[RMDB]
RNA sequence: GGGAACGACUCGAGUAGAGUCGAAAAUUAGCUUAAAAAAACUAUAUACAAGUGGUGGUAGUCCGCCACUCUAAGGGGACGCCUUUAGAAGAAGAGGCUAGGGGGUAUUCCGGUGUGGGAUACUUAGUCUCUACCCUGGAUUCGUCCAGGGUAGAGAAAAAGAAACAACAACAACAAC
Reactivity to 2A3 in 0.01 (KOAc 150mM, MgCl2 10mM, bicine 150mM(pH8.5), 24C), signal-to-noise 1, nucleotides 027 to 126: u100u150a020g020c050u080u120a090a040a020a040a000a000a000c050u070a130u030a010u030a300c080a160a000g000u000g000g000u000g000g030u000a000g050u010c000c000g030c020c000a000c000u000c000u000a000a000g000g000g000g020a010c030g260c020c000u000u000u010a010g050a000a020g010a000a000g040a080g000g000c000u000a000g080g000g000g000g000u020a000u000u000c000c020g050g100u090g000u290g080g050g000a000u000a050c010u010u000a090g070
Source information:
This 177-nucleotide RNA was probed chemically with 2A3. For 2A3 the reverse transcriptase was SuperScript II with manganese. Conditions: 150 mM KOAc, 10 mM MgCl2 and 150 mM bicine (pH 8.5), 24 C.